[RMDB]
RNA sequence: GGGAACGACUCGAGUAGAGUCGAAAAGUCUUGAACUUGAUACACAUAGUAUAGCACCUUAAAAACGAAUCAUCUGCUAGUUCAGUAUUUUCUACUUACAAUCACUCCCUCCCAGGGCAUGUAAUUACAUUUGUAACUUGUUCGCAAGUUACAAAUGAAAAGAAACAACAACAACAAC
Reactivity to 2A3 in 0.01 (KOAc 150mM, MgCl2 10mM, bicine 150mM(pH8.5), 24C), signal-to-noise 4, nucleotides 027 to 126: g050u030c030u070u100g030a050a020c000u030u060g030a000u080a080c030a010c030a140u140a070g060u040a050u030a090g040c020a070c030c000u090u090a070a120a050a020a030c060g020a060a050u040c020a020u010c050u070g020c030u050a020g040u030u050c010a000g010u010a090u040u060u010u000c030u020a060c020u060u030a030c040a050a100u080c020a030c070u030c000c000c010u000c010c000c010a000g020g010g000c030a020u070g010u070a050a030u080u020a020
Reactivity to DMS in 0.01 (KOAc 150mM, MgCl2 10mM, bicine 150mM(pH8.5), 24C), signal-to-noise 5, nucleotides 027 to 126: g010u000c040u000u000g020a080a040c030u000u000g000a110u000a050c060a080c100a100u000a100g000u000a040u000a080g010c030a070c030c030u010u000a030a060a090a080a100c100g000a100a080u000c080a040u000c050u000g010c030u000a070g000u000u000c040a050g010u000a060u010u000u000u010c040u000a050c060u010u010a050c100a060a070u010c090a100c080u000c010c010c020u000c010c010c020a160g010g000g000c160a030u000g010u000a030a080u000u010a120
Conditions: 150 mM KOAc, 10 mM MgCl2 and 150 mM bicine (pH 8.5), 24 C. This 177-nucleotide RNA was probed chemically with 2A3 and DMS. For 2A3 the reverse transcriptase was SuperScript II with manganese. Values are in units of 0.01, from 0 to 300, in steps of 10. DMS adducts were read by reverse transcription with MarathonRT. For DMS, 5,454 sequencing reads were counted.